The record gives the reactivity of an RNA of 177 nucleotides to 2A3 and DMS. The reactions ran in a buffer of 150 mM KOAc, 10 mM MgCl2 and 150 mM bicine (pH 8.5), at 24 C. The 2A3 profile rests on 12,138 reads.
RNA sequence: GGGAACGACUCGAGUAGAGUCGAAAAGAUAUGGAAAUAGUGUCGCGAUAAGCUGGUGUCGGAAACGACACCCAGCUUUUGACGCGGCUAUUUCCUAAGUCUAAAACCCUCCCCUUCGGGGGAGGGACCUAUUCCAAUGGUUCGCCAUUGGAAUAGGAAAAGAAACAACAACAACAAC
Reactivity to 2A3 in 0.01 (KOAc 150mM, MgCl2 10mM, bicine 150mM(pH8.5), 24C), signal-to-noise 5, nucleotides 027 to 126: g000a000u010a020u060g000g030a000a010a000u020a010g080u140g300u300c000g000c020g090a220u140a300a010g010c000u000g000g020u010g000u000c000g000g000a040a010a020c000g000a000c000a010c010c000c000a010g000c000u040u030u040u160g150a070c020g000c000g020g000c000u000a000u010u000u000c000c000u000a010a010g000u000c010u070a060a110a260a300c000c020c000u000c000c000c000c000u030u110c300g060g000g000g000g010a000g000g000g010a000
Reactivity to DMS in 0.01 (KOAc 150mM, MgCl2 10mM, bicine 150mM(pH8.5), 24C), signal-to-noise 3, nucleotides 027 to 126: g000a010u000a170u010g000g000a020a010a000u000a010g010u000g010u030c010g010c010g030a110u010a010a030g010c010u000g020g020u000g020u000c010g010g000a040a010a070c000g010a010c000a000c170c120c090a000g000c000u000u000u010u010g020a120c040g010c010g000g000c000u010a000u000u000u010c000c000u000a000a090g000u000c010u000a070a090a170a140c010c000c000u000c000c000c000c000u000u010c260g030g010g010g010g000a010g000g010g010a000